[RMDB]
RNA sequence: GGGAACGACUCGAGUAGAGUCGAAAAAGAAAGAGAGCGUAGCACACACACAGACUAAGUCUGACACACACCUACGCUACAUGUGUGUGUGAUGUCGAGAUAUCGACAAGUGUGUGUGAUGAAAAAACAGGCAUAACCGUUUCGACGGUUAUGCCUGAAAAGAAACAACAACAACAAC
Reactivity to DMS in 0.01 (KOAc 150mM, MgCl2 10mM, bicine 150mM(pH8.5), 24C), signal-to-noise 1, nucleotides 027 to 126: a060g000a040a050a070g010a030g010a090g000c000g000u000a030g000c000a010c000a010c020a000c000a020c000a040g000a030c020u010a130a120g020u000c020u000g010a080c000a010c000a000c000a010c000c020u000a020c070g010c120u000a060c190a040u000g000u000g000u000g000u010g030u000g000a120u010g000u000c010g000a020g060a220u000a050u000c000g000a000c000a010a040g040u000g010u000g000u000g010u000g000a070u000g010a000a070a050a030a060a090
Reactivity to 2A3 in 0.01 (KOAc 150mM, MgCl2 10mM, bicine 150mM(pH8.5), 24C), signal-to-noise 1, nucleotides 027 to 126: a000g070a030a060a020g130a000g020a020g060c040g000u030a010g000c010a020c000a010c010a010c000a000c000a000g020a010c000u060a220a050g040u000c020u000g030a000c000a000c000a000c010a000c000c010u050a040c000g010c040u110a080c080a060u070g000u000g000u010g000u010g000u010g050a060u040g000u000c010g000a020g000a090u130a070u150c000g000a010c030a060a050g020u000g010u000g000u000g000u000g010a010u040g000a050a050a030a010a000a000